[RMDB]
RNA sequence: GGGAACGACUCGAGUAGAGUCGAAAAGAUGGAAUGGAGGGGAAGCAGUGGGCACAGCUGGCGGCUGCUAUGGUGGCUGGAUGACAGAUGGAGCAGGACAGCUGUGGAGACAGGAUGGCCACCCCUGUACUACCUGGGCCCCAGGAGGGCGCUGCUGCUGUUAUAGCUAUUUCGAUAGCUAUAACAGAAAAGAAACAACAACAACAAC
Reactivity to 2A3 in 0.01 (KOAc 150mM, MgCl2 10mM, bicine 150mM(pH8.5), 24C), signal-to-noise 2, nucleotides 027 to 156: g070a040u130g010g040a040a110u100g050g000a020g070g010g000g040a030a040g000c050a030g030u130g040g040g030c010a010c020a000g010c000u020g010g050c060g140g050c040u020g000c040u100a120u160g020g000u010g010g000c020u070g000g130a180u160g030a050c020a070g130a050u180g030g090a020g000c000a000g030g020a020c010a000g040c000u010g040u050g040g010a050g020a000c010a000g000g000a020u060g050g000c010c010a010c010c010c000c010u040g010u110a270c010u090a140c020c010u040g050g030g010c000c040c040c000a000g000g030a050g030g040g000c020g000c040u040g010c030u040g000